Description:
An RNA of 177 nucleotides, treated with DMS and 2A3 and read out base by base. For DMS the reverse transcriptase was MarathonRT. 2A3 adducts were read by reverse transcription with SuperScript II with manganese. The reactions ran in a buffer of 150 mM KOAc, 10 mM MgCl2 and 150 mM bicine (pH 8.5), at 24 C. It was measured as part of the RMDB library M2PK50.
[RMDB]
RNA sequence: GGGAACGACUCGAGUAGAGUCGAAAACAGACUCACUUCGGUGAGUCUGAAAGGAGUAAUCGAUAGCGAAAACAACCAGAUUACUCAAGGGUAGUGACAAAAAAAGUUAGAGCUUCGGCUCUAACAAUCUCUAUUCCAUGUUCGCAUGGAAUAGAGAAAAAGAAACAACAACAACAAC
Reactivity to DMS in 0.01 (KOAc 150mM, MgCl2 10mM, bicine 150mM(pH8.5), 24C), signal-to-noise 2, nucleotides 027 to 126: c010a020g010a010c000u000c000a010c000u020u000c140g030g020u000g000a010g000u000c000u000g000a010a060a100g020g020a010g020u000a000a010u000c020g010a100u020a090g000c050g010a080a060a080a150c110a080a050c080c070a180g000a020u000u010a000c020u000c000a040a090g000g000g030u000a050g010u000g000a110c140a000a000a080a040a040a090a150g010u000u000a010g000a040g000c000u010u010c250g050g000c020u000c000u000a010a010c000a070a060
Reactivity to 2A3 in 0.01 (KOAc 150mM, MgCl2 10mM, bicine 150mM(pH8.5), 24C), signal-to-noise 1, nucleotides 027 to 126: c000a000g000a000c000u000c000a000c000u040u050c100g120g000u000g000a000g010u030c000u000g000a010a000a020g100g000a010g000u010a010a010u010c040g030a150u110a060g100c110g220a040a060a030a230c070a020a020c030c050a010g000a000u010u030a000c020u000c010a030a040g090g030g010u120a120g090u120g150a040c160a040a190a070a000a000a000a040g000u000u000a000g010a000g000c020u040u090c300g100g000c010u000c010u000a000a000c000a000a000